[RMDB]
This 177-nucleotide RNA was probed chemically with 2A3 and DMS.
2A3 adducts were read by reverse transcription with SuperScript II with manganese.
The reactions ran in a buffer of 150 mM KOAc, 10 mM MgCl2 and 150 mM bicine (pH 8.5), at 24 C.
RNA sequence: GGGAACGACUCGAGUAGAGUCGAAAAGUUCGGGCCUUCGGGCCCGAACAAAUAAUCCAGCCUGGAAAGGGUGGAGCCUAAACUAUGGAAAAGGCACCAUAGAAACCACAUGGUUCGCCAUGUGGAACAUUUAAUUAAUGUUCGCAUUAAUUAAAUGAAAAGAAACAACAACAACAAC
Reactivity to 2A3 in 0.01 (KOAc 150mM, MgCl2 10mM, bicine 150mM(pH8.5), 24C), signal-to-noise 1, nucleotides 027 to 126: g000u000u000c000g040g020g030c030c020u050u140c200g120g020g010c010c000c000g010a010a000c000a010a000a000u060a010a000u020c000c000a010g160c010c000u030g040g200a190a040a000g060g000g000u020g000g000a020g000c000c000u120a150a110a070c010u010a020u040g010g060a020a090a220a210g180g060c060a020c010c010a000u010a030g050a060a070a030c000c000a000c000a000u010g000g040u030u060c090g040c030c000a000u000g000u000g000g010a000a000
Reactivity to DMS in 0.01 (KOAc 150mM, MgCl2 10mM, bicine 150mM(pH8.5), 24C), signal-to-noise 4, nucleotides 027 to 126: g010u010u000c010g020g000g020c010c000u000u010c220g050g010g050c010c010c000g020a000a000c000a010a070a080u000a140a110u000c010c000a040g010c000c000u000g010g030a160a110a030g010g000g010u010g000g000a040g010c020c010u010a060a080a160c020u000a010u000g000g000a070a080a120a100g010g020c180a110c000c000a010u000a020g000a220a090a190c010c000a000c000a020u010g010g000u000u020c190g010c000c000a010u000g010u010g000g010a040a060